[RMDB]
RNA sequence: GGGAACGACUCGAGUAGAGUCGAAAAGAUAUGGACCAGUCCACGUGACUGAUGACCAGGUUUCGGAAACGAAACCUGCAAGGUCCCGUGGAGCUGGUCCUAAGUCAAAGAGCCCUUCGGGGCUCAACUUGUAGCCAAUCUUCGGAUUGGCUACAAGAAAAGAAACAACAACAACAAC
Reactivity to DMS in 0.01 (KOAc 150mM, MgCl2 10mM, bicine 150mM(pH8.5), 24C), signal-to-noise 1, nucleotides 027 to 126: g000a060u000a300u030g010g000a000c000c010a030g040u010c010c000a000c000g050u010g010a010c000u010g010a050u040g000a150c300c000a000g000g000u000u000u020c000g020g000a160a100a220c000g010a000a000a000c000c000u000g000c010a040a070g010g000u000c000c070c000g000u000g010g010a080g000c000u020g010g020u000c000c010u000a000a110g000u000c020a100a180a170g010a000g020c020c010c000u000u000c300g060g000g010g030c000u000c010a020a110